[RMDB]
RNA sequence: GGGAACGACUCGAGUAGAGUCGAAAAGAUAUGGAGCCCCAUAACCGAGCUACCGGCUCGAUGAAAGGGAUCGGAAACGAUCCCUGGAGAGCCCGGGUAGCGUUUGACGUUAUGGGGCUCCUAAGUCCGCAAAUAAUAAGUUCGCUUAUUAUUUGCGAAAAGAAACAACAACAACAAC
Reactivity to DMS in 0.01 (KOAc 150mM, MgCl2 10mM, bicine 150mM(pH8.5), 24C), signal-to-noise 1, nucleotides 027 to 126: g010a090u000a300u020g000g000a040g020c020c010c000c010a050u000a000a030c000c050g030a130g000c000u000a020c000c020g000g000c010u000c000g000a080u020g020a180a270a030g000g020g020a010u000c000g000g000a110a090a280c010g040a020u000c000c010c000u010g000g000a100g010a040g020c040c060c300g090g070g020u000a010g000c000g020u010u000u010g000a180c300g030u010u000a010u000g010g000g000g000c000u000c000c000u020a020a100g000u000c060